[RMDB]
RNA sequence: GGGAACGACUCGAGUAGAGUCGAAAAGAUAUGGAUCUUCUCUGCGCGUAGCGCUCCCUCGGAAACGAGGCCCGCUACGAACUACGCAGGAAGAUCCUAAGUCAAAACCUCUUCUUCGGAAGAGGAAGUAACAUGUAAACUUCGGUUUACAUGUUACAAAAGAAACAACAACAACAAC
Reactivity to DMS in 0.01 (KOAc 150mM, MgCl2 10mM, bicine 150mM(pH8.5), 24C), signal-to-noise 6, nucleotides 027 to 126: g000a050u000a300u010g000g000a010u000c000u010u000c000u020c010u010g030c010g010c010g010u010a000g000c000g010c080u000c160c020c000u000c000g000g000a110a100a180c020g010a010g010g020c290c300c000g000c000u000a010c030g010a050a050c090u010a300c020g000c010a010g000g000a030a000g000a000u000c000c000u000a000a040g000u000c040a120a060a110a110c000c000u000c000u000u000c000u000u010c170g010g010a020a000g010a010g000g010a020a040
Reactivity to 2A3 in 0.01 (KOAc 150mM, MgCl2 10mM, bicine 150mM(pH8.5), 24C), signal-to-noise 1, nucleotides 027 to 126: g030a010u080a050u180g000g010a010u010c010u020u000c300u010c010u060g000c060g000c010g010u010a000g000c000g010c050u200c030c010c000u000c000g010g040a090a070a030c010g010a000g000g000c010c010c020g000c000u010a000c010g010a020a010c100u280a030c040g000c000a000g000g010a010a000g000a000u010c000c000u000a000a000g020u010c010a010a020a080a180c000c000u000c000u010u000c000u030u040c260g170g000a000a000g000a010g000g000a010a010
This 177-nucleotide RNA was probed chemically with DMS and 2A3. 2A3 adducts were read by reverse transcription with SuperScript II with manganese. For DMS, 7,215 sequencing reads were counted. The reactions ran in a buffer of 150 mM KOAc, 10 mM MgCl2 and 150 mM bicine (pH 8.5), at 24 C. DMS adducts were read by reverse transcription with MarathonRT. Source: RMDB library TTRDEL, as collected in RNAgym.